[RMDB]
RNA sequence: GGGAACGACUCGAGUAGAGUCGAAAAUGACGUUAAACUGCUGACUCAUACAUACUGACACCGGUUGCUCAACAGCCUGUGUGGGACAAUAGAAUAACAAGGCUGUCAAUUUGAGCUUGACGGCUGCAAAACCUGCAGUACUUCGGUACUGCAGGAAGCGAAGCAUAAAGUUCGCUUUAUGCUUCGCAAAAGAAACAACAACAACAAC
Reactivity to 2A3 in 0.01 (KOAc 150mM, MgCl2 10mM, bicine 150mM(pH8.5), 24C), signal-to-noise 5, nucleotides 027 to 156: u060g040a010c070g010u060u070a070a100a070c070u090g030c030u030g040a030c010u040c050a020u060a130c030a030u120a080c060u100g140a020c020a020c030c030g010g020u020u020g030c060u050c120a040a120c000a060g000c000c000u030g000u010g000u030g050g030g020a010c020a030a150u060a160g150a070a050u100a100a010c050a080a060g030g000c010u000g000u010c000a010a020u110u070u200g040a040g040c000u000u020g000a000c010g010g010c030u040g020c040a000a000a020a200c000c000u000g000c010a000g000u000a000c000u010u030c070g100g000u000a000c000u000g000c000a000g000g000a000a000
Reactivity to DMS in 0.01 (KOAc 150mM, MgCl2 10mM, bicine 150mM(pH8.5), 24C), signal-to-noise 1, nucleotides 027 to 156: u000g010a140c090g000u000u000a060a020a230c040u000g020c020u030g020a110c040u010c010a040u010a080c040a090u000a140c030u000g050a080c050a030c030c000g050g030u010u000g020c040u000c040a110a120c000a010g000c000c030u010g000u000g030u000g000g000g020a110c030a030a090u010a080g010a090a170u000a080a040c040a080a100g030g000c000u000g000u000c010a060a030u000u000u010g010a060g040c270u010u000g000a010c000g040g000c000u000g000c010a060a070a070a130c010c000u000g020c000a000g010u010a000c000u000u000c300g040g020u000a000c000u000g050c000a000g000g010a010a040